[RMDB]
RNA sequence: GGGAACGACUCGAGUAGAGUCGAAAAUCCUAACGCUUCGGCGUUAGGAAAAGUUAAUUGGCAGAUUAACAUGUUAGAAUUAGAAUCUAACUAGUCUAUAAAAAACUGCGUGGUUCGCCACGCAGAAGUACGGGAGAAAGUUCGCUUUCUCCCGUACAAAAGAAACAACAACAACAAC
Reactivity to DMS in 0.01 (KOAc 150mM, MgCl2 10mM, bicine 150mM(pH8.5), 24C), signal-to-noise 1, nucleotides 027 to 126: u000c000c010u020a000a000c000g010c000u000u000c200g000g040c000g010u000u000a000g010g000a010a010a040a080g000u000u000a000a030u000u000g020g050c240a090g000a060u000u000a010a010c010a140u000g000u000u000a000g000a040a110u000u020a160g020a190a120u000c000u010a000a010c010u010a130g010u020c050u010a120u000a010a090a020a070a110a080c000u000g020c010g020u000g020g000u000u010c280g010c000c000a000c000g000c000a000g000a000a020
Reactivity to 2A3 in 0.01 (KOAc 150mM, MgCl2 10mM, bicine 150mM(pH8.5), 24C), signal-to-noise 2, nucleotides 027 to 126: u000c000c000u010a020a010c000g000c020u010u040c110g170g000c000g000u000u020a010g030g000a000a020a000a040g000u030u070a020a060u060u060g180g030c070a010g020a130u020u020a040a020c030a080u070g020u000u000a020g000a020a050u120u050a150g070a140a100u000c000u000a000a020c000u000a020g060u060c040u120a220u190a010a230a020a010a080a060c020u020g000c020g000u020g010g010u030u090c240g080c110c000a000c000g000c030a000g000a000a000

Notes
This 177-nucleotide RNA was probed chemically with DMS and 2A3. Source: RMDB library M2PK50, as collected in RNAgym. The 2A3 profile rests on 1,160 reads.